[RMDB]
RNA sequence: GGGAACGACUCGAGUAGAGUCGAAAAAACAUUACAAUUACUAUUUACAAUUACAAUGGCAUACACACAGACAGCUACCACAUCAGCCUUGCUGGACACUGUCCGAGGAAAUAACUCCUUGGUCAACGUUAAUGUAAUGAUUCGUCAUUACAUUAACAAAAGAAACAACAACAACAAC
Reactivity to DMS in 0.01 (KOAc 150mM, MgCl2 10mM, bicine 150mM(pH8.5), 24C), signal-to-noise 5, nucleotides 027 to 126: a070a030c060a060u020u030a090c090a070a060u050u020a090c080u020a070u020u010u020a080c110a050a050u030u020a060c150a080a040u000g000g010c060a040u000a080c090a060c050a090c030a060g000a090c060a050g010c010u010a070c050c020a030c050a050u020c070a080g000c030c030u000u010g010c040u010g010g000a050c100a030c120u000g000u000c000c000g000a010g000g010a030a060a070u040a070a120c140u000c000c000u000u000g000g010u010c060a060a050c170
Reactivity to 2A3 in 0.01 (KOAc 150mM, MgCl2 10mM, bicine 150mM(pH8.5), 24C), signal-to-noise 9, nucleotides 027 to 126: a000a000c130a110u180u130a060c080a120a090u170u050a070c070u130a170u150u180u090a080c110a090a120u140u050a050c050a070a090u110g050g000c030a030u070a060c040a020c010a010c020a070g080a070c020a020g040c010u050a080c010c020a050c010a090u090c030a020g020c010c020u060u110g010c020u040g030g040a030c040a010c100u040g010u000c010c000g000a000g010g040a040a120a050u190a120a110c090u010c000c000u000u010g020g020u040c050a060a030c080